Conditions: 150 mM KOAc, 10 mM MgCl2 and 150 mM bicine (pH 8.5), 24 C. Structure probing data (DMS and 2A3) for a 177-nucleotide construct. For 2A3 the reverse transcriptase was SuperScript II with manganese. DMS adducts were read by reverse transcription with MarathonRT. The DMS profile rests on 15,157 reads. Source: RMDB library TTRINS, as collected in RNAgym.
RNA sequence: GGGAACGACUCGAGUAGAGUCGAAAAGAUAUGGAGGUAUGCAUGGCGAAGAACACUUUGUCAUAUCACUCACUCGGAAACGAGUGAGGUGAUAUGACAAAGUGGGAGCCAUGUACCUCCUAAGUCACUACUAUAAGGUGUUCGCACCUUAUAGUAGAAAAGAAACAACAACAACAAC
Reactivity to DMS in 0.01 (KOAc 150mM, MgCl2 10mM, bicine 150mM(pH8.5), 24C), signal-to-noise 6, nucleotides 027 to 126: g000a040u000a300u010g000g010a020g020g020u000a050u010g030c020a010u000g000g010c010g000a100a200g020a110a210c000a000c000u000u000u000g000u000c000a010u000a000u000c000a050c000u000c000a020c000u000c000g000g010a130a120a230c010g000a020g010u000g010a030g010g010u000g010a000u000a000u000g000a010c000a000a000a010g010u000g000g000g000a080g010c010c000a000u000g010u000a010c000c000u000c000c000u000a000a050g010u000c040a300
Reactivity to 2A3 in 0.01 (KOAc 150mM, MgCl2 10mM, bicine 150mM(pH8.5), 24C), signal-to-noise 5, nucleotides 027 to 126: g020a030u080a070u240g010g000a000g020g000u150a140u300g140c010a000u000g020g000c040g240a300a020g050a190a000c000a000c010u000u000u000g000u010c000a000u000a000u020c000a010c000u010c000a000c000u010c020g030g050a130a130a120c040g010a010g020u010g010a010g000g000u010g000a000u000a000u010g000a000c020a000a010a000g010u000g000g000g000a000g000c010c010a000u010g000u000a000c000c010u000c000c000u000a040a000g010u010c020a010